[RMDB]
RNA sequence: GGGAACGACUCGAGUAGAGUCGAAAAGACCACCUCUACGAGAGGUGUUAGGCAUUAGCCAGCCACAACGGCUUGCACGCGAGUCUAGACCCCUUCGUGCAAACAUAUUCAAGCAGCCGUUGCAGCACAUAUCCGCAUAGUUCGCUAUGCGGAUAUGAAAAGAAACAACAACAACAAC
Reactivity to DMS in 0.01 (KOAc 150mM, MgCl2 10mM, bicine 150mM(pH8.5), 24C), signal-to-noise 5, nucleotides 027 to 126: g010a150c130c000a020c000c000u010c000u020a160c210g000a180g010a010g000g020u000g000u000u000a060g010g020c000a120u010u020a090g000c020c030a160g000c020c060a180c030a020a020c020g000g010c000u000u000g020c020a020c010g000c260g010a030g000u000c020u010a120g000a200c140c110c260c040u000u000c020g010u000g010c030a040a100a110c200a060u000a080u020u020c170a110a130g010c220a080g000c010c010g010u000u000g000c060a090g020c050a260
Reactivity to 2A3 in 0.01 (KOAc 150mM, MgCl2 10mM, bicine 150mM(pH8.5), 24C), signal-to-noise 4, nucleotides 027 to 126: g020a020c000c010a000c010c010u000c000u050a160c210g110a050g000a010g300g000u020g010u030u130a060g000g000c020a030u070u110a030g020c020c010a000g000c010c010a020c010a010a010c000g000g000c030u020u030g000c020a010c010g040c060g000a010g010u000c020u040a040g110a140c010c000c000c000u000u030c020g020u010g020c000a010a120a020c100a090u240a130u140u260c080a090a060g060c020a030g000c050c000g000u000u020g000c020a000g010c000a000